[RMDB]
RNA sequence: GGGAACGACUCGAGUAGAGUCGAAAAAGCAGUCGAUUCGUCGACUGCUAAUGGGUCGGGACUACAUCACAGGUUCUUCCCUAGCCCUCUUUGGACCAGUAAAAAAGAGCUUAUUCGUAAGCUCUAACGAAUGGGUAGAGUUCGCUCUACCCAUUCGAAAAGAAACAACAACAACAAC
Reactivity to DMS in 0.01 (KOAc 150mM, MgCl2 10mM, bicine 150mM(pH8.5), 24C), signal-to-noise 2, nucleotides 027 to 126: a010g000c000a010g010u000c000g020a020u000u020c200g030u000c010g000a000c020u000g000c000u010a010a030u010g000g080g000u000c170g000g000g000a130c040u000a040c100a130u020c240a050c210a100g020g020u000u000c030u020u000c010c000c010u000a160g000c040c000c000u030c100u000u010u000g010g000a070c040c010a130g030u010a000a030a040a040a090a020g000a030g000c010u000u000a030u000u000c180g010u000a000a000g020c000u000c000u000a010a050